[RMDB]
RNA sequence: GGGAACGACUCGAGUAGAGUCGAAAAGUGAAUGAGCGUCGACGGACCGAUGCUAUCACAGUCACAUACCAAUCUAACAUAGCUCAAGGCUUCCACUUUUUGCAGCAGGUUUGGAUUAACGACGCAAACAUCUGCACAUCUUCGGAUGUGCAGAUGUAAAAGAAACAACAACAACAAC
Reactivity to DMS in 0.01 (KOAc 150mM, MgCl2 10mM, bicine 150mM(pH8.5), 24C), signal-to-noise 2, nucleotides 027 to 126: g030u030g000a050a040u010g000a060g000c000g010u000c010g050a190c150g000g010a180c130c020g010a050u000g020c000u000a060u000c040a120c080a080g050u040c020a030c100a080u000a070c010c020a040a050u000c090u010a060a050c080a080u010a050g020c030u010c020a040a040g010g000c090u030u000c090c100a110c050u020u000u000u010u000g040c090a060g020c030a200g010g000u000u000u000g000g030a080u000u010a070a160c100g030a070c130g010c120a070a060
Reactivity to 2A3 in 0.01 (KOAc 150mM, MgCl2 10mM, bicine 150mM(pH8.5), 24C), signal-to-noise 1, nucleotides 027 to 126: g000u000g060a120a060u060g040a050g000c000g020u010c010g000a070c090g140g040a000c020c010g020a010u030g000c000u030a040u020c010a000c020a110g040u050c020a070c020a110u060a020c020c010a010a030u020c040u050a050a070c040a130u090a030g010c020u000c040a060a010g040g000c000u100u060c000c010a090c010u030u120u040u030u120g030c050a010g010c010a060g090g000u030u060u050g050g020a050u060u030a050a090c050g100a020c050g000c120a050a080
An RNA of 177 nucleotides, treated with DMS and 2A3 and read out base by base. The reactions ran in a buffer of 150 mM KOAc, 10 mM MgCl2 and 150 mM bicine (pH 8.5), at 24 C. The DMS profile rests on 917 reads. It was measured as part of the RMDB library OK2TST. As a SHAPE reagent, 2A3 marks flexible, mostly unpaired nucleotides at the ribose 2'-OH. DMS adducts were read by reverse transcription with MarathonRT.